[RMDB]
RNA sequence: GGGAACGACUCGAGUAGAGUCGAAAAAGCACUUUGGGAGACCAAGGCGGGCGGAUCACCUGAGAUUGGGAGUUUGAGACCAGCCUGACCAACAUGGUGAAACCGUGUCUCUACUAAAAAAAAAUACAAAAAAUUAGCUGGGCAAGGUGGCACACGCCAUACGCAAGACUUUCGAGUCUUGCGUAUGAAAAGAAACAACAACAACAAC
Reactivity to 2A3 in 0.01 (KOAc 150mM, MgCl2 10mM, bicine 150mM(pH8.5), 24C), signal-to-noise 3, nucleotides 027 to 156: a010g000c010a010c050u070u050u090g010g030g000a120g020a060c060c020a040a040g030g010c060g000g030g000c050g040g020a030u040c020a030c020c010u070g020a120g040a230u080u120g010g020g020a030g050u030u120u190g100a090g000a050c000c010a010g020c030c010u070g040a110c040c010a050a080c020a060u140g030g010u070g000a070a060a010c040c020g050u060g040u050c000u000c000u070a180c040u130a040a070a030a030a030a010a010a010a080u270a130c100a040a160a040a040a070a110u100u060a030g010c030u040g010g010g010c000a000a060g000g010u010g030g000c020a030c020a020c090g090c040
Reactivity to DMS in 0.01 (KOAc 150mM, MgCl2 10mM, bicine 150mM(pH8.5), 24C), signal-to-noise 1, nucleotides 027 to 156: a050g000c030a010c040u010u000u000g030g000g030a160g030a130c070c020a040a030g020g090c070g020g020g030c060g030g020a280u000c020a020c010c020u000g000a060g020a100u000u010g000g040g040a060g020u000u010u020g010a180g030a060c010c000a070g020c020c020u000g000a070c010c030a060a100c040a110u000g000g010u000g000a080a020a080c010c000g040u000g010u000c020u010c030u010a120c040u000a000a060a000a000a020a070a140a210a080u010a160c030a030a040a050a110a050a100u030u000a030g020c000u000g010g000g040c010a040a060g000g090u000g000g000c000a070c080a060c040g030c050
This 207-nucleotide RNA was probed chemically with 2A3 and DMS. For 2A3, 1,137 sequencing reads were counted. The reactions ran in a buffer of 150 mM KOAc, 10 mM MgCl2 and 150 mM bicine (pH 8.5), at 24 C. Values cover nucleotides 27 to 156. The data come from the RNA Mapping Database (RMDB), library OK3TST.